[RMDB]
Source information: Structure probing data (DMS and 2A3) for a 207-nucleotide construct.
RNA sequence: GGGAACGACUCGAGUAGAGUCGAAAAGACUGAUGUAGAGUUCGGUUGGAGCGACAAGUUUUUAGCUUGAGAUAGCUAAAUCACCUCGGUAUGAUUAGGGUGAGACCUAGGAACCGUAGGGGUAUUCAAUGCUGUAUUGCGUUCGCGCAAUACAGAACAAAGGACAAAUGUUCGCAUUUGUCCUUUGAAAAGAAACAACAACAACAAC
Reactivity to DMS in 0.01 (KOAc 150mM, MgCl2 10mM, bicine 150mM(pH8.5), 24C), signal-to-noise 4, nucleotides 027 to 156: g020a120c020u020g010a060u000g010u000a090g010a150g010u000u000c040g010g010u000u000g020g010a070g020c040g010a070c050a040a100g000u000u000u000u000u010a020g010c000u000u000g010a280g000a150u000a040g020c010u000a010a030a070u000c060a050c020c000u000c020g010g030u000a100u010g020a230u000u000a040g010g000g030u000g010a290g010a150c020c020u000a060g020g010a080a070c030c010g030u010a060g020g010g010g020u010a070u000u010c070a080a120u000g010c000u000g010u000a010u000u000g020c020g020u000u000c300g040c040g040c000a000a010u000a000c020a010g000a050a160
Reactivity to 2A3 in 0.01 (KOAc 150mM, MgCl2 10mM, bicine 150mM(pH8.5), 24C), signal-to-noise 7, nucleotides 027 to 156: g040a010c070u060g050a040u110g060u120a030g010a020g080u050u070c030g010g020u030u040g040g020a030g030c050g060a070c060a110a060g030u060u000u030u060u030a000g000c010u020u020g010a020g000a060u080a020g000c010u020a010a040a040u080c040a030c000c010u020c020g020g000u270a190u200g050a060u050u030a010g010g010g020u050g080a060g040a050c000c000u010a010g020g020a020a010c010c000g010u070a030g000g020g010g000u020a110u070u160c110a080a090u130g030c000u010g000u000a000u000u000g010c000g020u010u050c170g000c000g000c120a000a000u000a000c000a000g010a010a000

Reactivities are rounded to 0.1 and cut off at 0 and 3. Reactivities are given for positions 27 through 156.